The data come from the RNA Mapping Database (RMDB), library OK2TRN.
Chemical mapping of a 177-nucleotide RNA with DMS.
For DMS, 1,262 sequencing reads were counted.
Values cover nucleotides 27 to 126.
The reactions ran in a buffer of 150 mM KOAc, 10 mM MgCl2 and 150 mM bicine (pH 8.5), at 24 C.
DMS adducts were read by reverse transcription with MarathonRT.
[RMDB]
RNA sequence: GGGAACGACUCGAGUAGAGUCGAAAACGUGCGUACUGGGCCGCCGGCACAAUGUUCAACCCAGCCGUCUCAGAGGCCGCGGUUCGACAACGAUCAGCCAGCCGGUCAGCGGGGUCCUCCUAGCUAGAUAUACUGCUCGUUUCGACGAGCAGUAUAUAAAAGAAACAACAACAACAAC
Reactivity to DMS in 0.01 (KOAc 150mM, MgCl2 10mM, bicine 150mM(pH8.5), 24C), signal-to-noise 2, nucleotides 027 to 126: c090g010u000g010c050g030u000a050c100u020g000g000g000c020c080g010c110c040g020g000c000a080c100a070a090u020g010u010u000c160a020a060c000c010c030a070g000c040c030g000u010c210u010c200a130g000a140g020g000c000c000g040c100g000g000u000u000c070g000a010c020a060a060c160g010a100u000c130a090g000c010c060a040g020c040c060g010g010u000c070a060g020c060g000g000g020g010u000c050c070u000c010c030u020a070g030c070u010a040g000